[RMDB]
RNA sequence: GGGAACGACUCGAGUAGAGUCGAAAAAGCUGUUCUCACGGCAGCAGCUGUGGCAUUCCUCUGUGGGAGAGAAACUGUUACACGAUUGAAACCGCUUUCUUAGCAAAACAGAAAGCGGGCAUGUGUGUUACGUUAAUAGCUUCGGCUAUUAACGUAAAAAAGAAACAACAACAACAAC
Reactivity to 2A3 in 0.01 (KOAc 150mM, MgCl2 10mM, bicine 150mM(pH8.5), 24C), signal-to-noise 9, nucleotides 027 to 126: a000g020c020u020g010u060u010c020u020c020a020c030g020g010c020a010g010c000a010g010c050u040g010u020g070g000c010a030u050u020c020c010u000c030u070g070u150g080g130g000a040g000a010g020a030a070a030c050u050g030u070u040a010c020a000c030g070a110u060u150g070a150a090a050c000c000g000c010u000u010u000c000u010u030a070g140c120a060a070a040a050c030a020g000a000a000a000g000c000g000g000g000c010a030u110g020u010g010u000g020
Reactivity to DMS in 0.01 (KOAc 150mM, MgCl2 10mM, bicine 150mM(pH8.5), 24C), signal-to-noise 9, nucleotides 027 to 126: a050g000c020u000g000u010u010c040u010c050a070c090g010g010c090a040g010c030a060g010c040u000g000u010g010g010c060a120u010u000c030c000u000c080u010g020u010g000g000g000a110g010a080g000a070a080a080c110u010g010u010u020a050c010a020c020g010a130u030u020g010a080a100a110c000c000g000c000u000u000u000c000u010u000a130g020c240a080a070a090a130c290a020g000a000a010a000g010c000g010g000g010c050a020u010g000u020g010u000g010